[RMDB]
RNA sequence: GGGAACGACUCGAGUAGAGUCGAAAAUGCUUAAGCGUAGUAUGAAUCACAUAACUGAAGCUGCAUACUUAUUAGCUCAAAGUGUUUGUGAGUAUACACAUGCACAAUGUGCCAUCAUCAAUGCUGGCCAAAGUUAUUCAUUCGUGAAUAACUUUGGAAAAGAAACAACAACAACAAC
Reactivity to 2A3 in 0.01 (KOAc 150mM, MgCl2 10mM, bicine 150mM(pH8.5), 24C), signal-to-noise 9, nucleotides 027 to 126: u160g010c040u150u140a090a010g010c020g040u020a020g020u030a050u060g100a170a080u240c040a050c010a090u150a170a070c070u090g070a130a020g010c020u030g020c030a050u050a110c030u140u150a090u100u150a070g000c000u020c050a080a080a050g020u010g030u030u040u020g010u010g020a050g090u080a040u050a090c010a000c000a010u030g010c020a010c010a040a070u040g020u050g020c040c010a080u100c000a000u040c030a090a140u110g020c020u040g040g010
Reactivity to DMS in 0.01 (KOAc 150mM, MgCl2 10mM, bicine 150mM(pH8.5), 24C), signal-to-noise 8, nucleotides 027 to 126: u040g020c020u010u030a070a040g020c030g030u010a120g010u030a030u010g010a140a130u030c040a020c040a030u030a090a080c130u010g020a090a080g020c030u000g000c170a060u020a090c160u020u020a070u030u030a030g010c000u010c040a040a080a140g010u000g000u010u000u000g010u000g020a200g010u020a090u030a110c020a020c010a030u010g000c060a050c090a090a070u000g010u020g000c070c090a030u010c040a060u010c100a090a060u020g020c020u020g000g010